This 207-nucleotide RNA was probed chemically with 2A3.
Reactivities are rounded to 0.1 and cut off at 0 and 3.
The RNA was probed in 150 mM KOAc, 10 mM MgCl2 and 150 mM bicine (pH 8.5) at 24 C.
The data come from the RNA Mapping Database (RMDB), library M2RFPK.

RNA sequence: GGGAACGACUCGAGUAGAGUCGAAAACACAGGAUCGUGUGGAAGUCCUGCUCGGGGCGGAAGCAUUAAAACCAUUCGAGCUAGUCUAUGCGUGGCGUGUCUCUCCGCAGCGUGUUGGCGAAUGUAACAAGCUGCCUCUCGUUCGCGAGAGGCAGAACCACUACGUUAGCUUCGGCUAACGUAGUGGAAAAGAAACAACAACAACAAC
Reactivity to 2A3 in 0.01 (KOAc 150mM, MgCl2 10mM, bicine 150mM(pH8.5), 24C), signal-to-noise 1, nucleotides 027 to 156: c000a000c020a020g260g070a260u280c090g020u000g050u020g040g060a000a060g030u040c030c030u030g010c000u020c040g000g000g000g020c040g000g030a080a000g070c040a080u060u140a080a030a000a000c040c040a020u060u090c050g040a030g050c030u030a050g020u040c000u010a030u030g040c010g020u040g000g000c000g040u030g080u020c030u000c000u000c100c000g020c000a020g020c000g030u070g020u080u020g000g000c060g000a050a100u090g020u080a040a120c060a010a090g070c000u000g000c000c000u030c000u000c000g030u080u020c250g000c000g070a000g000a020g010g030c000a000g000a000a000